Conditions: 150 mM KOAc, 10 mM MgCl2 and 150 mM bicine (pH 8.5), 24 C. An RNA of 207 nucleotides, treated with 2A3 and read out base by base.

[RMDB]
RNA sequence: GGGAACGACUCGAGUAGAGUCGAAAAGUGAUAUCUUUCCAUAGAGGGCUAUUGAUUCAAAGUGCUCCAUACAGUGGCCAUGAAGCUUAGGGACAGAGACUAUGUCCCUAAGCUAUGAGUAACUAUGGUUACUCAUAUCUGGGAUCAGCAAGAAUCAUACUCACCCCUAGUUCGCUAGGGGUGAGUAAAAAGAAACAACAACAACAAC
Reactivity to 2A3 in 0.01 (KOAc 150mM, MgCl2 10mM, bicine 150mM(pH8.5), 24C), signal-to-noise 1, nucleotides 027 to 156: g070u050g040a020u000a070u150c060u000u060u000c020c000a000u150a040g060a070g000g000g000c020u030a050u180u060g020a060u130u000c070a110a040a110g120u070g050c010u000c030c020a030u050a190c050a010g030u060g100g000c090c010a050u150g070a100a010g010c010u000u000a000g020g000g010a000c000a000g160a000g020a070c050u100a070u090g000u030c010c000c000u000a000a000g000c030u000a000u000g000a000g000u020a000a000c020u070a050u300g120g000u010u000a000c000u020c010a010u020a030u070c060u010g170g000g000a130u090c000a000g060c000a030a040g050a050a000u190c110a030